[RMDB]
RNA sequence: GGGAACGACUCGAGUAGAGUCGAAAACAAUACACGCUAACUUACAAUUAUAGUUAUACAAAUUUGGAUAACACGACGAGCACUGUGUCAGCAAAUAGCACAAUCCAAGUCACUGCUGAAAACGCGAUGUGUUAUCCUGAUUCGUCAGGAUAACACAAAAAGAAACAACAACAACAAC
Reactivity to 2A3 in 0.01 (KOAc 150mM, MgCl2 10mM, bicine 150mM(pH8.5), 24C), signal-to-noise 3, nucleotides 027 to 126: c010a000a080u130a100c040a020c060g040c010u050a070a030c010u020u150a020c030a090a090u190u100a080u150a230g030u040u030a110u020a160c020a020a130a150u090u090u030g020g010a020u030a100a030c040a030c100g140a030c040g010a010g050c010a020c070u100g010u010g040u110c020a010g030c040a030a030a240u080a110g040c070a010c030a090a050u050c010c010a030a000g020u010c010a020c110u030g000c000u030g050a000a010a030a030c100g040c050g020a080
Reactivity to DMS in 0.01 (KOAc 150mM, MgCl2 10mM, bicine 150mM(pH8.5), 24C), signal-to-noise 2, nucleotides 027 to 126: c060a110a080u000a120c120a050c070g000c050u020a020a050c050u010u000a070c110a100a100u000u010a140u000a040g000u010u010a080u000a050c070a070a070a100u030u000u000g010g040a050u030a040a080c070a090c080g000a070c030g000a100g010c050a020c100u020g000u000g000u000c040a010g020c060a070a090a080u000a040g010c050a020c090a070a090u000c060c150a040a080g010u000c080a030c080u000g020c070u030g050a010a040a040a080c140g020c080g040a150